Chemical mapping of a 177-nucleotide RNA with 2A3 and DMS.
[RMDB]
RNA sequence: GGGAACGACUCGAGUAGAGUCGAAAAGAUAUGGAAUACGAGCGAUAAGCUGCUAUUCGGAAACGAAUGUCAGCUUUUGACGCUCGUUCCUAAGUCAAACGCGUUCACCCUUCGGGGUGAACGCGAAGGUACUUAAUUUGUUCGCAAAUUAAGUACCAAAAGAAACAACAACAACAAC
Reactivity to 2A3 in 0.01 (KOAc 150mM, MgCl2 10mM, bicine 150mM(pH8.5), 24C), signal-to-noise 3, nucleotides 027 to 126: g000a020u080a040u140g000g070a060a040u180a220c050g000a000g010c020g020a060u020a140a010g000c000u000g000c010u010a010u020u010c000g020g030a060a050a010c010g000a010a010u030g020u090c000a010g000c000u050u040u030u080g190a060c030g000c000u000c000g000u000u000c000c000u030a140a010g050u030c030a120a010a050c030g000c000g030u000u000c010a020c020c000c020u030u130c300g090g010g010g020u010g000a000a010c020g010c010g000a000a000
Reactivity to DMS in 0.01 (KOAc 150mM, MgCl2 10mM, bicine 150mM(pH8.5), 24C), signal-to-noise 3, nucleotides 027 to 126: g000a040u000a300u000g000g000a020a060u000a070c040g010a010g050c000g020a160u000a010a030g010c010u000g000c030u000a010u000u000c000g000g000a090a090a180c000g020a020a000u000g010u000c000a010g000c000u000u000u010u000g020a190c060g010c010u000c000g010u000u000c000c000u000a070a150g000u000c030a050a080a230c020g010c000g000u000u000c000a000c000c000c010u000u010c230g010g010g010g010u000g000a000a000c000g010c000g000a010a030

For 2A3, 9,804 sequencing reads were counted. The RNA was probed in 150 mM KOAc, 10 mM MgCl2 and 150 mM bicine (pH 8.5) at 24 C. The data come from the RNA Mapping Database (RMDB), library TTRDEL.